Structure probing data (2A3) for a 177-nucleotide construct. Reactivities are given for positions 27 through 126.
RNA sequence: GGGAACGACUCGAGUAGAGUCGAAAAGAGGCUUGUCGCAAUGCUGACGUGCAAAUCGCUUGUCUAACUUGAGUAUAGGGGCGAAAGACUAAUCGAACAACCUAGUAGCUGGUUCCUUCCGAAGUUUCUGUCGUAGUGCGUUCGCGCACUACGACAGAAAAGAAACAACAACAACAAC
Reactivity to 2A3 in 0.01 (KOAc 150mM, MgCl2 10mM, bicine 150mM(pH8.5), 24C), signal-to-noise 1, nucleotides 027 to 126: g000a000g030g020c120u090u130g110u190c060g000c050a000a060u140g010c000u160g070a030c030g000u030g000c000a050a050a120u100c020g000c000u060u070g020u000c000u000a000a000c000u010u080g050a000g070u100a100u030a090g000g010g000g000c000g030a020a050a000g100a150c090u090a040a250u170c090g070a010a000c020a000a090c000c000u050a070g050u010a000g100c000u000g000g000u000u000c000c080u000u090c000c000g010a100a000g000u030u000u000
The RNA was probed in 150 mM KOAc, 10 mM MgCl2 and 150 mM bicine (pH 8.5) at 24 C.